Chemical mapping of a 207-nucleotide RNA with 2A3 and DMS.
The DMS profile rests on 3,165 reads.
Reactivities are given for positions 27 through 156.
RNA sequence: GGGAACGACUCGAGUAGAGUCGAAAAACGAGAGUGAGAACUCGUUCACUCUCACGUGAGAUCACGAGAACACUCGAGUGAGAACGUGUGUUCGAGAACACGUACGAUCGAGUGUGUGUACACACACACGAGUGAACGUGUUCGUACGUACGAGUUCGGUUUUAUGGUCAUUCGUGACCAUAAAACCAAAAGAAACAACAACAACAAC
Reactivity to 2A3 in 0.01 (KOAc 150mM, MgCl2 10mM, bicine 150mM(pH8.5), 24C), signal-to-noise 6, nucleotides 027 to 156: a020c110g010a040g000a010g000u040g010a090g020a030a010c000u010c010g010u000u010c010a020c000u000c000u020c010a010c020g020u040g010a220g050a130u290c050a010c050g050a040g030a080a000c010a020c020u030c030g010a050g110u210g120a120g040a050a020c020g010u020g000u020g010u090u120c100g030a030g010a080a010c010a000c010g030u100a040c070g050a070u030c010g000a030g020u000g000u000g000u000g030u090a080c140a010c020a000c000a000c000a000c210g000a020g010u050g030a030a010c010g000u010g000u000u010c000g000u040a030c020g010u030a040c010g010a020g070u060u110c030
Reactivity to DMS in 0.01 (KOAc 150mM, MgCl2 10mM, bicine 150mM(pH8.5), 24C), signal-to-noise 2, nucleotides 027 to 156: a070c060g010a100g000a100g000u020g020a110g020a090a070c020u000c030g000u010u000c010a050c020u000c010u020c030a060c060g020u010g020a090g000a170u000c000a110c060g000a070g010a120a080c070a020c010u000c010g000a120g030u000g000a210g010a100a100c020g000u010g010u020g000u000u010c100g010a190g010a060a020c000a000c000g070u000a210c020g000a120u000c010g000a090g020u010g060u000g000u000g030u000a110c130a150c040a100c010a030c000a120c000g000a070g000u010g020a060a060c020g030u010g000u010u000c020g010u000a080c010g000u020a080c080g010a100g030u000u010c050